[RMDB]
RNA sequence: GGGAACGACUCGAGUAGAGUCGAAAAAAAGUAAACAGAUAGUAUAGUUGAAUAUGUACUCUGCCUCACAAACCUUUCAUUUCAACUUUGCCUAGUCCCCGUUACCAACAAAAAAAGGUCAGUCAGAGUAAACAGAUAAGAAAUGUGGCUGAAUAUGUGACUUAUACUGCUUCGGCAGUAUAAGUCAAAAAGAAACAACAACAACAAC
Reactivity to DMS in 0.01 (KOAc 150mM, MgCl2 10mM, bicine 150mM(pH8.5), 24C), signal-to-noise 1, nucleotides 027 to 156: a020a070a150g000u000a060a020a120c010a110g020a100u000a150g050u000a040u000a050g030u000u020g010a070a140u000a010u000g020u010a080c030u000c020u000g000c090c030u000c080a070c060a110a060a030c050c000u000u030u030c030a170u000u000u000c010a030a010c050u000u000u000g030c000c020u000a120g010u010c000c020c040c030g040u010u000a060c000c030a070a090c140a020a000a030a060a050a060a150g010g010u010c030a040g000u010c020a080g010a190g020u000a030a060a160c010a030g000a110u000a040a210g030a070a040a120u000g050u000g000g050c000u000g000a010a110u010a060u000g010
Reactivity to 2A3 in 0.01 (KOAc 150mM, MgCl2 10mM, bicine 150mM(pH8.5), 24C), signal-to-noise 1, nucleotides 027 to 156: a000a000a030g090u070a040a070a020c050a000g070a090u180a010g020u010a040u010a120g010u070u000g020a070a020u120a040u210g010u000a000c030u000c010u160g020c060c040u090c000a070c090a080a070a080c010c000u040u080u080c040a160u010u010u000c000a030a050c000u040u060u160g020c020c010u040a070g000u120c020c020c130c090g090u080u030a000c240c000a010a030c020a060a060a260a000a040a260a000g130g060u300c030a020g000u160c000a010g060a020g080u030a020a020a020c040a000g130a140u170a150a000g050a020a110a080u130g000u060g000g030c010u010g020a000a000u200a120u300g080
Structure probing data (DMS and 2A3) for a 207-nucleotide construct. The reactions ran in a buffer of 150 mM KOAc, 10 mM MgCl2 and 150 mM bicine (pH 8.5), at 24 C. For 2A3, 424 sequencing reads were counted.